Notes:
An RNA of 207 nucleotides, treated with 2A3 and read out base by base. 2A3 adducts were read by reverse transcription with SuperScript II with manganese.

RNA sequence: GGGAACGACUCGAGUAGAGUCGAAAAAAAAACCGUAGGCCUGUGGAAUUUCGGGAGUCGGAUUUCCAACGGUAUAUUCGAAAGAGUAUACGGUUGGCCGGUCGACAUCGAUCGAAGGAACACCAGUGGCGAAGGCGACAGGCCUAAACGGAAAAAACCUAACAUUAUGGUUCGCCAUAAUGUUAGGAAAAGAAACAACAACAACAAC
Reactivity to 2A3 in 0.01 (KOAc 150mM, MgCl2 10mM, bicine 150mM(pH8.5), 24C), signal-to-noise 3, nucleotides 027 to 156: a000a000a000a000a000c010c010g010u010a000g020g010c000c000u010g020u050g100g030a190a210u020u060u090c050g000g040g030a080g040u060c050g070g060a060u140u190u030c000c000a010a010c000g120g000u000a000u000a000u000u000c020g040a140a070a040g000a050g010u000a000u010a000c100g120g000u010u000g000g000c020c030g040g030u010c000g010a040c030a220u160c080g080a030u050c010g070a050a070g050g060a090a040c050a080c080c030a110g040u110g180g050c060g030a030a010g060g000c030g040a030c000a000g000g040c000c000u020a090a050a010c010g040g030a050a110a000a040a000a040